[RMDB]
RNA sequence: GGGAACGACUCGAGUAGAGUCGAAAACGGCGAGCCGCGCUCGCGCAUUGCCGUGCUGCAACACAGCUAUCAUGGCGACACGAUCGGCACCAUGUCAGCGGGGGAGCGUGGUGUUUUCAACGCGGCAGAUGCCGUGACUGUUCGCAGUCACGGCAUCAAAAGAAACAACAACAACAAC
Reactivity to 2A3 in 0.01 (KOAc 150mM, MgCl2 10mM, bicine 150mM(pH8.5), 24C), signal-to-noise 2, nucleotides 027 to 126: c020g070g000c020g010a000g020c000c030g110c120g000c070u010c060g020c000g010c040a120u030u110g030c010c000g020u020g040c040u030g000c010a010a090c090a020c030a180g050c020u060a090u250c070a130u140g040g030c020g060a040c020a020c060g080a190u060c060g020g000c010a020c020c010a030u020g060u030c090a050g060c090g000g040g020g000g040a000g000c050g060u040g080g060u050g050u080u080u000u050c030a050a030c010g020c010g020g030c010a010
Reactivity to DMS in 0.01 (KOAc 150mM, MgCl2 10mM, bicine 150mM(pH8.5), 24C), signal-to-noise 2, nucleotides 027 to 126: c090g030g040c030g010a090g040c010c070g010c180g000c150u020c040g050c050g020c160a050u020u020g010c000c000g000u010g030c080u000g000c280a120a090c230a100c120a130g020c050u000a110u000c060a060u000g010g010c010g020a130c050a040c080g000a080u010c080g000g000c010a050c010c010a070u000g000u030c050a050g020c060g000g000g020g020g000a120g000c020g030u000g000g020u000g000u000u000u000u010c040a050a070c030g000c010g040g000c050a120
Source information: The data come from the RNA Mapping Database (RMDB), library OK2TST. The record gives the reactivity of an RNA of 177 nucleotides to 2A3 and DMS. The RNA was probed in 150 mM KOAc, 10 mM MgCl2 and 150 mM bicine (pH 8.5) at 24 C. For 2A3 the reverse transcriptase was SuperScript II with manganese.